[RMDB]
RNA sequence: GGGAACGACUCGAGUAGAGUCGAAAAGAAAGAAAAAGAAAUCAUCAAAUGAGGUCAAACGUCAGAAUUUCGGGCGUAAAUACGACAUUAUGCAGAAAGCCGACCUCGGUGUCGUUUAGAAAGAAAACCUAAAUUAUAAUUUCGAUUAUAAUUUAGGAAAAGAAACAACAACAACAAC
Reactivity to 2A3 in 0.01 (KOAc 150mM, MgCl2 10mM, bicine 150mM(pH8.5), 24C), signal-to-noise 5, nucleotides 027 to 126: g020a010a080a010g080a030a110a010a010a000g130a050a110a020u140c080a010u040c080a050a050a250u140g020a010g030g010u020c030a090a070a040c020g030u000c000a020g070a220a160u080u150u180c040g040g040g000c010g020u090a030a140a010u160a030c040g000a000c020a020u040u090a040u180g050c040a020g120a140a050a010g060c040c040g000a010c000c000u000c000g000g010u020g000u000c000g000u000u090u060a110g050a090a130a000g080a000a040a010a020
Reactivity to DMS in 0.01 (KOAc 150mM, MgCl2 10mM, bicine 150mM(pH8.5), 24C), signal-to-noise 3, nucleotides 027 to 126: g010a100a070a080g020a040a110a050a080a080g010a060a040a070u030c060a090u030c120a080a080a100u020g020a000g030g000u000c010a090a090a080c080g000u000c040a020g020a160a160u000u000u000c030g010g000g000c020g040u000a010a060a020u050a050c120g010a070c080a070u010u010a030u030g030c090a070g010a040a050a110g020c080c100g010a020c030c020u000c010g030g000u000g000u010c030g010u000u030u040a090g020a080a080a100g000a090a070a080a120